[RMDB]
RNA sequence: GGGAACGACUCGAGUAGAGUCGAAAAGAUAUGGAACUGCGACAUGCUGAACCUCGGAAACGAGGUGAACAGCAACAGCGUCAGUUCCUAAGUCAAACAACGUAGAAAGUUCGCUUUCUACGUUGAACGGGCUUAUUAAGUUCGCUUAAUAAGCCCGAAAAGAAACAACAACAACAAC
Reactivity to 2A3 in 0.01 (KOAc 150mM, MgCl2 10mM, bicine 150mM(pH8.5), 24C), signal-to-noise 3, nucleotides 027 to 126: g000a000u070a040u130g000g000a000a000c000u020g000c010g100a120c160a150u160g000c000u030g030a090a010c010c000u000c010g020g010a080a060a040c020g000a000g040g020u020g010a090a020c010a000g020c020a010a060c060a070g090c010g170u270c040a010g000u010u000c000c010u010a040a010g010u010c010a060a050a090c000a000a040c000g030u000a000g010a010a000a000g020u070u120c170g050c190u000u000u010c000u000a010c000g000u000u000g000a000a010
Reactivity to DMS in 0.01 (KOAc 150mM, MgCl2 10mM, bicine 150mM(pH8.5), 24C), signal-to-noise 3, nucleotides 027 to 126: g010a050u020a300u000g010g000a010a000c000u000g020c000g010a050c100a150u000g010c000u010g000a120a020c000c000u000c000g000g010a110a060a170c020g010a010g000g000u000g040a080a090c020a010g000c000a040a150c300a140g010c030g000u010c010a020g020u000u000c010c000u010a030a070g000u000c010a100a110a300c020a010a000c010g010u000a000g000a000a010a010g010u000u020c200g000c000u000u000u000c010u000a000c000g000u000u010g010a030a080